Conditions: 150 mM KOAc, 10 mM MgCl2 and 150 mM bicine (pH 8.5), 24 C.
An RNA of 177 nucleotides, treated with 2A3 and DMS and read out base by base.
RNA sequence: GGGAACGACUCGAGUAGAGUCGAAAACGGCGGUGACGAUCAUGCCUUCGCCGGCGAUGAUCUCGGUGGCGGCGCCGAUAACGAUGUCGACGCCGGGCUGGAUGUCCGGGUUGCCGGCCUUGCCGAUUUAAAGGUGUCUUUUCGAAGACACCUUUAAAAAAGAAACAACAACAACAAC
Reactivity to 2A3 in 0.01 (KOAc 150mM, MgCl2 10mM, bicine 150mM(pH8.5), 24C), signal-to-noise 4, nucleotides 027 to 126: c010g010g000c000g010g050u040g030a060c040g010a030u040c010a030u130g010c010c020u050u040c050g030c030c010g000g010c010g090a060u040g000a020u020c030u000c030g030g040u040g060g060c010g020g000c020g000c000c010g010a030u050a110a050c150g080a060u110g010u020c010g000a010c020g000c030c000g000g020g010c030u080g050g070a130u190g090u080c040c010g030g050g000u020u060g020c020c020g040g010c010c010u040u160g040c000c010g030a050u020
Reactivity to DMS in 0.01 (KOAc 150mM, MgCl2 10mM, bicine 150mM(pH8.5), 24C), signal-to-noise 4, nucleotides 027 to 126: c110g000g000c010g000g020u010g000a030c050g020a030u010c030a030u010g000c010c010u010u010c270g000c190c130g000g000c010g010a020u000g000a030u000c010u010c010g000g000u010g000g000c020g000g000c010g010c030c010g000a150u050a070a120c180g010a070u010g000u010c000g010a020c010g010c000c000g000g000g000c010u000g010g000a150u020g000u020c030c030g010g010g000u000u000g000c010c020g000g020c020c040u000u020g010c000c010g000a230u020